[RMDB]
RNA sequence: GGGAACGACUCGAGUAGAGUCGAAAAUCGCCUUCGUGAACAACCUCGUCUGGCUCGUGGUGGGCACCGGUCUGGUGGUCUUCUUCGGCCUGGUGGUGGCCCUCCUGGCCGACAGGGUGCCGUUCGACCGUUGGGUAAUAUUCGUAUUACCCAACGGAAAAGAAACAACAACAACAAC
Reactivity to 2A3 in 0.01 (KOAc 150mM, MgCl2 10mM, bicine 150mM(pH8.5), 24C), signal-to-noise 4, nucleotides 027 to 126: u080c050g160c030c010u080u130c090g180u130g030a020a010c010a010a020c020c010u050c040g010u000c100u240g030g000c050u070c180g260u100g010g010u000g000g000g000c000a000c010c000g040g080u120c040u090g130g060u070g020g050u010c020u260u000c030u130u150c140g030g000c010c000u040g030g010u050g000g030u040g120g110c000c000c000u010c000c000u000g000g010c000c000g000a000c010a000g010g010g000u020g070c040c080g020u000u020c010g020a070
Reactivity to DMS in 0.01 (KOAc 150mM, MgCl2 10mM, bicine 150mM(pH8.5), 24C), signal-to-noise 3, nucleotides 027 to 126: u000c160g010c050c030u000u010c110g020u000g010a040a040c060a160a040c010c010u010c070g010u000c000u020g050g010c010u010c210g010u000g010g000u000g010g010g030c000a040c020c000g020g020u010c050u000g030g030u010g030g020u000c150u000u000c180u010u010c120g020g010c000c000u000g020g030u000g000g030u010g020g020c000c010c010u000c010c000u000g000g010c010c000g010a020c040a020g010g000g030u000g020c150c130g020u000u000c040g010a190